Overview: An RNA of 177 nucleotides, treated with DMS and 2A3 and read out base by base. DMS adducts were read by reverse transcription with MarathonRT. The 2A3 profile rests on 8,013 reads. Source: RMDB library M2PK50, as collected in RNAgym. DMS (dimethyl sulfate) methylates the pairing face of unpaired adenines and cytosines.
[RMDB]
RNA sequence: GGGAACGACUCGAGUAGAGUCGAAAACGCGUCAUGUUCGCAUGACGCGCAUUACCGAGAAAGGAGCUCGGUAUAAAACUCCAACCCUUGGAAACAAGGGAAAACCGAUAGUAUUCGUACUAUCGAAUGAACAAAAACUAUUCGUAGUUUUUGUUCAAAAAGAAACAACAACAACAAC
Reactivity to DMS in 0.01 (KOAc 150mM, MgCl2 10mM, bicine 150mM(pH8.5), 24C), signal-to-noise 4, nucleotides 027 to 126: c010g000c000g000u000c000a000u000g010u000u010c200g010c020a010u000g000a010c000g020c000g000c050a030u010u000a220c010c000g000a010g010a100a080a120g020g010a090g010c000u000c010g010g010u000a020u000a040a020a060a080c060u000c010c040a130a250c000c000c010u000u000g000g000a160a110a200c000a010a000g010g000g010a040a020a070a100c200c010g000a010u000a000g000u020a010u000u010c160g010u000a010c010u000a000u000c000g000a080a060
Reactivity to 2A3 in 0.01 (KOAc 150mM, MgCl2 10mM, bicine 150mM(pH8.5), 24C), signal-to-noise 3, nucleotides 027 to 126: c000g000c000g000u000c000a010u000g030u050u080c130g000c120a000u000g000a000c000g000c000g000c000a000u010u080a040c000c010g000a010g010a030a270a060g120g030a040g080c010u010c010g010g040u000a000u020a010a000a000a010c020u020c020c020a090a110c020c000c010u000u000g000g000a070a040a000c010a000a000g000g000g000a060a030a000a030c050c000g000a000u000a000g000u000a020u030u070c220g020u030a010c000u000a000u000c000g010a030a140